[RMDB]
RNA sequence: GGGAACGACUCGAGUAGAGUCGAAAAUCUUACUGUUCUGUGCAUUCAGCUAACAGAGUUGAACCUCAGUUUUGAUUGAGCAGUUCUGAAACCCUCUUUCUGUAGAAAAUACAAGUGGACAUUCAGGUGUGCCUUAAAAAUUCGUUUUUAAGGCACAAAAAGAAACAACAACAACAAC
Reactivity to DMS in 0.01 (KOAc 150mM, MgCl2 10mM, bicine 150mM(pH8.5), 24C), signal-to-noise 7, nucleotides 027 to 126: u010c030u000u010a060c070u000g000u000u000c030u010g010u000g020c130a120u010u000c050a060g010c170u010a060a080c110a070g000a030g010u000u000g010a080a130c270c030u000c030a040g010u000u000u010u010g000a070u000u000g010a060g000c060a040g010u000u000c020u000g000a050a070a190c110c020c020u000c040u000u000u000c110u000g010u000a030g000a100a050a080a080u000a030c050a050a050g020u000g000g010a070c120a140u000u000c050a030g010g010
Reactivity to 2A3 in 0.01 (KOAc 150mM, MgCl2 10mM, bicine 150mM(pH8.5), 24C), signal-to-noise 3, nucleotides 027 to 126: u020c010u000u080a020c020u030g000u040u050c010u020g050u060g120c010a060u020u080c020a010g010c050u060a170a100c030a110g090a000g070u070u120g040a040a030c010c010u050c040a060g020u020u000u210u210g090a080u010u020g000a020g000c010a000g010u100u000c000u020g120a170a150a150c000c020c000u020c010u030u180u010c030u040g050u030a010g070a120a290a020a010u070a020c020a050a060g020u030g030g020a030c040a120u020u020c010a030g090g030

This 177-nucleotide RNA was probed chemically with DMS and 2A3. The reactions ran in a buffer of 150 mM KOAc, 10 mM MgCl2 and 150 mM bicine (pH 8.5), at 24 C. DMS adducts were read by reverse transcription with MarathonRT.